[RMDB]
RNA sequence: GGGAACGACUCGAGUAGAGUCGAAAACUUGCUCUUUUUUAUUGUAAGAAUUAUUUAGAAAUUUACAUGGUUAAUUCUUCUUUUCUUAUCGCACAAUGCUUUCACCUUGUCAUGCAGUGCUUUCUCCUUGACCCAUUUCAGCCAUAAACUACAUUGAAUUACGACGACGAUUCGUCGUCGUCGUAAUAAAAGAAACAACAACAACAAC
Reactivity to 2A3 in 0.01 (KOAc 150mM, MgCl2 10mM, bicine 150mM(pH8.5), 24C), signal-to-noise 1, nucleotides 027 to 156: c000u000u010g030c000u000c000u160u120u000u100u010u300a030u230u280g030u090a000a020g010a040a020u090u100a060u070u180u150a090g030a000a300a080u080u210u160a300c030a060u060g120g040u020u130a030a040u010u010c000u000u050c000u050u020u050u030c020u020u050a060u210c030g020c000a000c000a000a220u060g060c000u000u020u100c000a050c010c000u100u040g010u070c000a000u030g030c060a020g000u020g150c000u000u010u000c060u000c000c020u060u150g080a060c000c050c000a000u030u140u120c020a000g000c070c000a050u140a120a110a000c050u150a080c130a140u160u220g080a180
This 207-nucleotide RNA was probed chemically with 2A3.
Reactivities are given for positions 27 through 156.
For 2A3, 335 sequencing reads were counted.
The RNA was probed in 150 mM KOAc, 10 mM MgCl2 and 150 mM bicine (pH 8.5) at 24 C.
2A3 adducts were read by reverse transcription with SuperScript II with manganese.